An RNA of 177 nucleotides, treated with 2A3 and read out base by base. The reactions ran in a buffer of 150 mM KOAc, 10 mM MgCl2 and 150 mM bicine (pH 8.5), at 24 C. Source: RMDB library OK2TST, as collected in RNAgym. For 2A3 the reverse transcriptase was SuperScript II with manganese. As a SHAPE reagent, 2A3 marks flexible, mostly unpaired nucleotides at the ribose 2'-OH.
RNA sequence: GGGAACGACUCGAGUAGAGUCGAAAAUUUCCAUGGUCAAUGCUGGGUAUGGAAAGUAAGUCCUGUCAGUAAUCACAGUUGGUAGGAAGGCCAAUCUGUGAGCUGCAGUGCCUAGUGCAGUGCCUAGGAGCACUGCCCUCUUCGGAGGGCAGUGCUCAAAAGAAACAACAACAACAAC
Reactivity to 2A3 in 0.01 (KOAc 150mM, MgCl2 10mM, bicine 150mM(pH8.5), 24C), signal-to-noise 2, nucleotides 027 to 126: u020u000u040c000c000a010u070g120g080u070c090a170a150u170g140c050u070g010g070g080u080a070u120g060g020a070a090a040g110u170a080a010g120u030c000c000u000g120u130c000a020g000u040a210a100u020c000a000c000a000g030u000u000g000g050u050a130g070g140a120a010g160g000c000c020a000a010u110c030u000g000u000g030a010g000c000u000g000c020a010g000u000g060c000c010u030a040g030u090g130c040a090g050u050g080c020c010u050a090g010